Source information
An RNA of 177 nucleotides, treated with 2A3 and DMS and read out base by base. The RNA was probed in 150 mM KOAc, 10 mM MgCl2 and 150 mM bicine (pH 8.5) at 24 C. For 2A3 the reverse transcriptase was SuperScript II with manganese. For 2A3, 1,554 sequencing reads were counted. Values cover nucleotides 27 to 126. It was measured as part of the RMDB library OK2TST.
[RMDB]
RNA sequence: GGGAACGACUCGAGUAGAGUCGAAAAGCAACAAAUGAUGCUGUGCAAGAGGUUAUUGCAGGACAACGAGAGCUUGUGAUUGCAAUAGGUAAAAUGCAGGAUUACAUCAAUCAAGCGCUUAACAGCAGAAGUGAUGCGUAUUCGUACGCAUCACUUCAAAAGAAACAACAACAACAAC
Reactivity to 2A3 in 0.01 (KOAc 150mM, MgCl2 10mM, bicine 150mM(pH8.5), 24C), signal-to-noise 2, nucleotides 027 to 126: g050c020a010a030c030a120a140a090u140g010a010u040g000c020u050g020u030g090c040a050a020g050a010g110g160u060u030a020u040u000g020c000a020g030g050a000c010a030a010c020g070a010g040a030g300c020u010u020g040u050g050a300u000u060g000c000a010a020u010a010g110g020u150a100a130a000a040u080g030c000a000g030g040a060u080u080a020c000a090u130c030a000a090u030c020a080a020g080c040g010c050u140u100a050a000c030a020g040c010a040
Reactivity to DMS in 0.01 (KOAc 150mM, MgCl2 10mM, bicine 150mM(pH8.5), 24C), signal-to-noise 2, nucleotides 027 to 126: g010c060a020a090c080a080a080a100u000g000a090u010g000c000u000g000u010g020c040a030a040g000a300g000g000u000u000a020u000u000g000c020a020g000g000a010c010a020a020c020g030a220g020a160g020c300u010u010g040u000g000a180u000u000g010c030a000a030u000a000g000g000u000a050a030a170a090u000g000c020a120g000g000a080u000u040a060c110a040u020c080a050a080u000c090a040a140g020c280g010c010u010u000a070a030c150a070g000c040a070